[RMDB]
The data come from the RNA Mapping Database (RMDB), library 15KLIB.
The record gives the reactivity of an RNA of 170 nucleotides to DMS and 2A3.
The RNA was probed in 150 mM KOAc, 10 mM MgCl2 and 150 mM bicine (pH 8.5) at 24 C.
For DMS the reverse transcriptase was MarathonRT.
RNA sequence: GGGAACGACUCGAGUAGAGUCGAAAAGGGAGUCUGUGUUAGUUAAUGCUGCUAACACACAUCUUAAGCAUGGCGGUGGUAUCGCUGGUGCUAUUAAUGCGGCUUCAAAAGGGGCUGUCCAAAAAGAGAGGGUGCCGCUUCGGCGGCACCAAAAGAAACAACAACAACAAC
Reactivity to DMS in 0.01 (KOAc 150mM, MgCl2 10mM, bicine 150mM(pH8.5), 24C), signal-to-noise 2, nucleotides 027 to 129: g100g000g010a000g060u030c060u000g000u000g030u000u010a000g000u000u110a130a000u110g020c300u050g000c020u000a010a010c030a010c010a030c030a000u030c020u060u090a000a010g060c030a060u030g020g000c050g010g100u040g060g000u100a210u070c030g050c000u010g000g100u000g010c000u040a100u010u120a020a080u080g000c000g060g000c050u040u030c020a050a050a030a150g000g000g000g030c120u010g060u050c110c010a000a020a140a080a210g000a000g070a150g000
Reactivity to 2A3 in 0.01 (KOAc 150mM, MgCl2 10mM, bicine 150mM(pH8.5), 24C), signal-to-noise 3, nucleotides 027 to 129: g050g010g000a040g000u030c000u000g000u010g000u000u000a000g000u010u130a030a120u270g120c100u030g000c000u000a000a000c000a000c000a010c010a060u000c000u090u060a140a000g000c000a000u030g000g000c010g020g030u050g140g130u180a030u200c030g010c000u050g050g000u000g000c000u000a050u110u130a090a080u080g040c030g010g000c000u080u040c000a000a080a090a100g040g040g000g000c080u080g080u020c000c000a000a070a000a120a000g090a040g010a020g000